About this RNA:
Chemical mapping of a 207-nucleotide RNA with DMS and 2A3. The DMS profile rests on 9,625 reads. The 2A3 profile rests on 6,179 reads. The data come from the RNA Mapping Database (RMDB), library RNAMAK.
RNA sequence: GGGAACGACUCGAGUAGAGUCGAAAAACUAGGUUCGCCUAGUAUUCUGAUAUGGAGCGGAGAGCGAUGAAAUAUGGUGUUUGUAUGUCGGAAACGACAUAUGAUACCAUAUGGAGCUCCACUCGCUCCUAAGUCCGGGGAUAGAGUUCGCUCUAAACUAAAUGUAAAUGUUCGCAUUUACAUUUAGAAAAGAAACAACAACAACAAC
Reactivity to DMS in 0.01 (KOAc 150mM, MgCl2 10mM, bicine 150mM(pH8.5), 24C), signal-to-noise 3, nucleotides 027 to 156: a070c010u000a010g010g020u000u000c300g040c000c010u030a020g020u000a050u000u020c040u000g030a080u010a260u000g010g010a030g050c000g050g020a180g000a030g010c000g010a110u010g010a160a070a010u000a000u010g010g020u000g010u010u000u000g050u000a010u010g010u000c000g020g000a220a130a260c020g020a030c000a010u000a000u010g020a020u000a000c010c000a020u000a010u000g000g000a240g000c000u000c010c030a060c050u000c010g010c010u000c000c000u010a020a110g000u010c030c030g020g030g020g010a230u010a080g000a080g010u000u000c070g010c090u010c020u000a060a070a300
Reactivity to 2A3 in 0.01 (KOAc 150mM, MgCl2 10mM, bicine 150mM(pH8.5), 24C), signal-to-noise 3, nucleotides 027 to 156: a000c010u010a010g030g020u060u050c240g100c050c000u010a010g000u010a090u130u100c060u030g010a010u000a020u070g000g000a000g000c010g010g020a010g000a000g060c070g260a300u010g010a000a010a010u000a000u000g000g020u020g040u140u010u030g010u000a000u000g000u000c000g000g010a020a010a020c010g000a000c000a000u000a000u000g000a010u000a000c010c000a000u000a000u000g000g010a000g000c000u000c000c010a080c010u080c000g000c000u000c010c000u000a010a000g000u000c010c030g020g040g000g000a030u090a100g080a030g060u080u160c180g060c060u010c020u080a130a170a100